[RMDB]
RNA sequence: GGGAACGACUCGAGUAGAGUCGAAAAUAGCAUACAUAGUAUUAAUCUCUAUGACUAACAGAAGCAUAUAAGCAUUCUCCAUUGGAGCAAAGGCUUUCUUUGGCUACAGCUAGGGCAAGCCGGCAAGGUAUACCGGGUUUUUCGAAACCCGGUAUACAAAAGAAACAACAACAACAAC
Reactivity to DMS in 0.01 (KOAc 150mM, MgCl2 10mM, bicine 150mM(pH8.5), 24C), signal-to-noise 3, nucleotides 027 to 126: u020a090g020c100a090u020a190c050a020u030a020g000u050a150u020u030a120a110u020c160u000c020u020a030u000g000a170c010u040a120a120c090a150g010a220a070g000c050a070u020a050u070a070a120g010c050a070u000u000c040u000c010c020a100u030u020g010g000a070g030c110a080a140a090g000g000c010u010u000u000c020u000u020u000g000g030c000u010a100c300a110g000c010u000a010g000g000g030c010a030a030g000c000c000g010g000c090a060a050g020
Reactivity to 2A3 in 0.01 (KOAc 150mM, MgCl2 10mM, bicine 150mM(pH8.5), 24C), signal-to-noise 5, nucleotides 027 to 126: u090a000g020c040a030u080a070c010a010u040a040g060u050a070u090u130a240a130u070c050u000c000u080a040u020g080a110c020u040a110a060c060a090g100a140a030g020c050a030u100a020u060a240a030g040c050a090u110u020c050u000c040c030a180u070u200g070g030a030g000c040a060a160a060g020g000c000u030u000u000c020u050u030u020g030g000c020u120a200c110a120g000c010u020a020g000g030g010c020a000a000g000c010c020g030g010c040a030a040g120

Source: RMDB libraries RFM100 and RFMREP, as collected in RNAgym. This 177-nucleotide RNA was probed chemically with DMS and 2A3. The reactions ran in a buffer of 150 mM KOAc, 10 mM MgCl2 and 150 mM bicine (pH 8.5), at 24 C. For 2A3, 2,828 sequencing reads were counted.